An RNA of 177 nucleotides, treated with DMS and 2A3 and read out base by base. The reactions ran in a buffer of 150 mM KOAc, 10 mM MgCl2 and 150 mM bicine (pH 8.5), at 24 C. The data come from the RNA Mapping Database (RMDB), library OK1LIB. For DMS the reverse transcriptase was MarathonRT. The 2A3 profile rests on 13,199 reads. For 2A3 the reverse transcriptase was SuperScript II with manganese.
RNA sequence: GGGAACGACUCGAGUAGAGUCGAAAACGAGGGGCGCAAGGCGGCGUGCGCACCGCCUAUUCCCUGGGAGCAGCUCAUGUGCCAGAUGCGUGCACAAUCCCGCGCGCACACCGUCGGCGAGCUCUUCCGGCCUAUUAUAGUUCGCUAUAAUAGGCCGAAAAGAAACAACAACAACAAC
Reactivity to DMS in 0.01 (KOAc 150mM, MgCl2 10mM, bicine 150mM(pH8.5), 24C), signal-to-noise 4, nucleotides 027 to 126: c100g000a050g000g000g020g010c090g030c010a100a100g020g000c050g020g000c050g010u020g020c040g000c030a220c100c060g000c020c060u010a150u010u000c020c000c020u030g000g000g010a050g010c090a060g000c090u020c060a130u030g040u010g020c000c010a180g020a180u020g000c060g010u020g000c010a040c050a070a080u020c040c010c010g000c070g000c000g040c010a040c050a070c060c010g030u000c010g010g000c100g010a070g010c000u000c010u000u000c050
Reactivity to 2A3 in 0.01 (KOAc 150mM, MgCl2 10mM, bicine 150mM(pH8.5), 24C), signal-to-noise 8, nucleotides 027 to 126: c060g010a040g010g010g010g010c030g000c050a070a110g030g000c000g020g000c020g010u030g010c010g000c030a040c010c040g060c000c000u050a120u030u040c010c010c000u010g010g010g000a030g020c070a020g010c020u030c090a100u130g050u090g060c020c020a040g060a230u160g070c090g110u160g010c010a010c020a040a060u060c020c010c010g030c010g000c000g000c010a000c000a010c010c020g030u040c010g020g020c030g010a040g030c010u010c000u020u000c010